The record gives the reactivity of an RNA of 207 nucleotides to 2A3 and DMS.
The reactions ran in a buffer of 150 mM KOAc, 10 mM MgCl2 and 150 mM bicine (pH 8.5), at 24 C.
For DMS the reverse transcriptase was MarathonRT.
It was measured as part of the RMDB library M2RFPK.
2A3 adducts were read by reverse transcription with SuperScript II with manganese.

[RMDB]
RNA sequence: GGGAACGACUCGAGUAGAGUCGAAAAAGUUAGGUUCGCUAUGGUGCAACUCUUUAAGGCAAUAACGAACUAAUUCUAAGCAAGUAAUGGAGAAAUGCCAGGGUGACUAUCUAGCCAUAAUAGUGCUGUAAGUGACUUAGAUUCGUCUAAGUCACAACAUAGCUAACUGCUUCGGCAGUUAGCUAUGAAAAGAAACAACAACAACAAC
Reactivity to 2A3 in 0.01 (KOAc 150mM, MgCl2 10mM, bicine 150mM(pH8.5), 24C), signal-to-noise 5, nucleotides 027 to 156: a000g060u050u040a040g020g050u060u030c010g000c020u020a020u050g090g030u080g090c050a110a210c040u070c080u130u170u130a070a060g050g000c030a060a090u080a100a060c070g010a030a010c020u030a040a060u110u040c040u110a110a020g030c040a040a050g080u150a100a050u120g060g030a050g040a060a090a050u050g000c010c010a030g000g020g020u020g000a020c010u000a030u070c040u040a020g030c010c000a010u040a170a060u060a130g130u100g040c030u040g060u100a170a050g000u010g000a000c000u010u000a010g020a010u050u060c160g000u020c170u000a000a000g010u000c000a000c000a000a000
Reactivity to DMS in 0.01 (KOAc 150mM, MgCl2 10mM, bicine 150mM(pH8.5), 24C), signal-to-noise 2, nucleotides 027 to 156: a070g020u000u000a070g020g000u000u000c030g050c020u010a030u000g010g020u010g030c040a070a170c090u000c060u000u000u020a060a160g010g000c020a080a060u000a060a060c090g040a070a120c030u010a040a060u010u000c080u000a130a100g000c060a050a130g000u010a050a100u000g010g000a100g000a050a070a080u000g010c000c020a070g030g020g020u000g000a080c030u000a060u000c050u000a060g020c040c020a050u000a050a130u010a090g020u000g010c020u000g020u010a040a150g010u010g030a040c000u000u000a010g030a040u010u010c300g050u000c010u000a000a010g010u000c010a010c000a040a120